Source: RMDB libraries RFM100 and RFMREP, as collected in RNAgym.
An RNA of 177 nucleotides, treated with 2A3 and DMS and read out base by base.
RNA sequence: GGGAACGACUCGAGUAGAGUCGAAAAGAACACAAUGAUGAACACCAUACCAAUAAGCAUAGUUCACCUGAGAUCUUCGGAUUGUUGAACGAAAACUGUAUACCAUCUUUCACCUUUAUCUGAUAAAUAACAACUGCUUGUUCGCAAGCAGUUGUUAAAAAGAAACAACAACAACAAC
Reactivity to 2A3 in 0.01 (KOAc 150mM, MgCl2 10mM, bicine 150mM(pH8.5), 24C), signal-to-noise 4, nucleotides 027 to 126: g080a040a030c110a020c080a150a130u150g130a040u090g060a100a020c030a010c050c010a010u080a090c000c020a110a200u140a160a010g050c000a010u050a080g020u030u000c010a040c000c030u040g040a050g020a100u000c030u080u040c100g040g000a060u020u100g040u080u030g080a040a020c020g050a030a010a040a040c020u030g020u040a050u040a050c040c000a010u050c000u050u030u030c040a100c010c000u080u110u110a110u090c020u020g070a040u040a190a170a010
Reactivity to DMS in 0.01 (KOAc 150mM, MgCl2 10mM, bicine 150mM(pH8.5), 24C), signal-to-noise 2, nucleotides 027 to 126: g000a070a120c070a100c080a170a050u110g000a080u000g010a100a060c060a110c020c010a020u000a050c090c040a060a060u000a080a110g030c070a060u010a020g030u020u000c020a020c010c060u020g000a050g000a040u000c030u020u000c070g030g000a050u000u000g000u010u020g020a070a100c020g010a070a050a060a030c030u000g010u020a020u000a100c030c000a020u030c030u000u000u000c060a100c030c060u000u010u000a040u020c020u020g000a120u000a000a120a160
Values cover nucleotides 27 to 126.
The reactions ran in a buffer of 150 mM KOAc, 10 mM MgCl2 and 150 mM bicine (pH 8.5), at 24 C.